[RMDB]
An RNA of 207 nucleotides, treated with 2A3 and read out base by base. 2A3 adducts were read by reverse transcription with SuperScript II with manganese. For 2A3, 1,466 sequencing reads were counted.
RNA sequence: GGGAACGACUCGAGUAGAGUCGAAAAGCAGUUUCACUCACUGUAGACUCUGAGCGCAGAGUGUCAGUCGUGCUACCACUUGCACGUGAUCAGAGUAAGUGUGAACUCUGACUGACGACACAAUCGCUUGUGUCCUAUAUAAUGAAACUGGUGAGUCGUGAUAGUCCUCGUUCGCGAGGACUAUCACAAAAGAAACAACAACAACAAC
Reactivity to 2A3 in 0.01 (KOAc 150mM, MgCl2 10mM, bicine 150mM(pH8.5), 24C), signal-to-noise 2, nucleotides 027 to 156: g070c000a000g000u010u010u000c020a020c040u040c010a100c040u010g000u000a000g000a000c000u020c010u030g040a060g180c070g000c060a000g000a000g020u000g000u000c010a010g000u010c010g010u000g000c030u100a150c080c000a030c080u030u020g020c030a040c070g120u120g110a100u170c040a040g010a000g050u030a040a060g070u070g080u070g170a040a030c010u000c010u030g000a010c010u010g010a000c020g000a000c020a000c000a010a080u230c050g010c150u030u000g000u010g010u020c010c000u000a020u010a010u030a010a020u020g010a010a000a030c000u020g010g100u140g060a060g090u200c120
The reactions ran in a buffer of 150 mM KOAc, 10 mM MgCl2 and 150 mM bicine (pH 8.5), at 24 C.